[RMDB]
RNA sequence: GGGAACGACUCGAGUAGAGUCGAAAAUACACGUUUCGACGUGUACAAUCGUUUGGUCGAAUGCUACUAGAGCAGCCUGACCAAACUAGUAUUAGUAAAUAAAGGACCGCAGAUGGUUCGCCAUCUGGCGUGGAGUUAGAUUCGUCUAACUCCACGCAAAAGAAACAACAACAACAAC
Reactivity to 2A3 in 0.01 (KOAc 150mM, MgCl2 10mM, bicine 150mM(pH8.5), 24C), signal-to-noise 2, nucleotides 027 to 126: u050a000c010a010c000g000u090u090u130c280g080a030c000g000u000g000u010a020c060a030a090u100c030g000u000u010u020g010g000u000c040g000a100a050u010g020c010u040a160c060u120a060g070a050g300c000a010g000c030c060u090g010a000c000c000a000a010a000c010u030a010g010u000a010u200u050a050g060u020a010a120a230u140a090a170a050g090g070a060c070c020g000c080a000g000a020u030g000g020u010u080c100g020c020c000a010u040c010u020g060
Reactivity to DMS in 0.01 (KOAc 150mM, MgCl2 10mM, bicine 150mM(pH8.5), 24C), signal-to-noise 2, nucleotides 027 to 126: u000a050c010a010c000g010u010u000u030c210g010a040c010g040u000g000u000a010c130a100a100u000c130g020u010u000u000g000g020u000c000g010a030a110u000g000c000u010a080c300u010a190g020a020g010c000a010g000c250c080u020g000a020c000c000a010a000a010c010u000a060g000u000a060u010u000a100g000u010a090a070a070u010a040a130a180g000g000a130c100c090g000c020a010g000a000u000g010g010u000u000c180g050c010c000a000u000c010u010g030
Structure probing data (2A3 and DMS) for a 177-nucleotide construct. For 2A3 the reverse transcriptase was SuperScript II with manganese. The DMS profile rests on 1,532 reads. Values cover nucleotides 27 to 126. Conditions: 150 mM KOAc, 10 mM MgCl2 and 150 mM bicine (pH 8.5), 24 C.